RNA sequence: GGGAACGACUCGAGUAGAGUCGAAAAGCAGUAUUGGUUUUGACACACAAGAAUUGAAUACAAUAUUUGAUAUUGUUGGUGCGAUAUUGCAUCUCGGUGAUGUACAUUUCGUUGAGAAUAUCGAAGACCUAUUAGUGGCAUUCGUGCCACUAAUAGGAAAAGAAACAACAACAACAAC
Reactivity to DMS in 0.01 (KOAc 150mM, MgCl2 10mM, bicine 150mM(pH8.5), 24C), signal-to-noise 4, nucleotides 027 to 126: g020c070a040g010u000a010u000u000g000g010u000u010u010u000g010a200c130a070c130a070c080a060a050g010a080a070u000u010g010a050a030u000a090c110a080a090u000a040u000u000u000g000a020u000a060u000u000g010u010u010g010g020u010g000c020g020a010u000a020u000u000g020c010a050u000c010u000c190g020g030u000g010a030u000g030u000a040c220a060u010u010u010c020g020u000u010g010a100g000a040a070u000a050u000c010g010a090a070g010a240
Reactivity to 2A3 in 0.01 (KOAc 150mM, MgCl2 10mM, bicine 150mM(pH8.5), 24C), signal-to-noise 3, nucleotides 027 to 126: g000c030a000g010u050a050u060u090g110g020u060u040u080u220g110a050c050a000c020a000c030a150a120g070a170a090u100u200g060a070a030u120a050c080a080a050u080a130u170u070u060g020a000u000a030u070u040g130u120u040g020g040u070g000c000g000a000u000a020u020u040g020c010a060u010c000u020c030g130g040u200g030a050u050g010u050a050c040a130u020u050u030c010g000u020u130g060a040g020a060a050u030a020u070c010g020a040a010g070a070

This 177-nucleotide RNA was probed chemically with DMS and 2A3. Values cover nucleotides 27 to 126. The DMS profile rests on 4,614 reads. The reactions ran in a buffer of 150 mM KOAc, 10 mM MgCl2 and 150 mM bicine (pH 8.5), at 24 C.